The record gives the reactivity of an RNA of 177 nucleotides to DMS and 2A3. For 2A3, 7,264 sequencing reads were counted. For 2A3 the reverse transcriptase was SuperScript II with manganese. Conditions: 150 mM KOAc, 10 mM MgCl2 and 150 mM bicine (pH 8.5), 24 C.

RNA sequence: GGGAACGACUCGAGUAGAGUCGAAAAAGACAACCAAUAUCUGACCCAUUUGCUGGAGCAAAUGACAGAGAAAUGGGAGGACAAGCAAAUGAUACACCUGUGUAUAACUUCAAUCCAAUCGAUACUCGUACCACCUUGAAUUCGUUCAAGGUGGUACAAAAGAAACAACAACAACAAC
Reactivity to DMS in 0.01 (KOAc 150mM, MgCl2 10mM, bicine 150mM(pH8.5), 24C), signal-to-noise 2, nucleotides 027 to 126: a130g000a220c050a060a170c070c030a020a090u040a170u000c000u000g000a070c100c120c010a020u000u000u020g030c000u020g020g020a120g000c000a000a030a010u000g010a150c030a000g000a000g000a040a090a040u000g000g000g000a300g000g000a060c140a010a090g000c160a100a060a060u000g000a060u000a020c010a060c030c030u010g040u000g000u000a020u000a040a060c030u000u020c030a060a020u000c010c000a050a110u020c110g000a050u020a060c090u020c090
Reactivity to 2A3 in 0.01 (KOAc 150mM, MgCl2 10mM, bicine 150mM(pH8.5), 24C), signal-to-noise 8, nucleotides 027 to 126: a010g120a030c050a040a070c030c010a040a040u070a020u060c010u020g130a150c030c040c030a010u010u000u010g030c060u160g110g160a300g050c010a040a020a000u050g060a080c010a010g020a000g040a000a090a050u070g040g010g000a040g040g020a030c050a070a020g070c030a030a060a150u150g030a010u040a090c030a030c020c050u090g020u040g020u080a010u030a120a090c030u050u050c090a060a060u000c030c010a020a090u070c010g070a050u070a150c050u060c120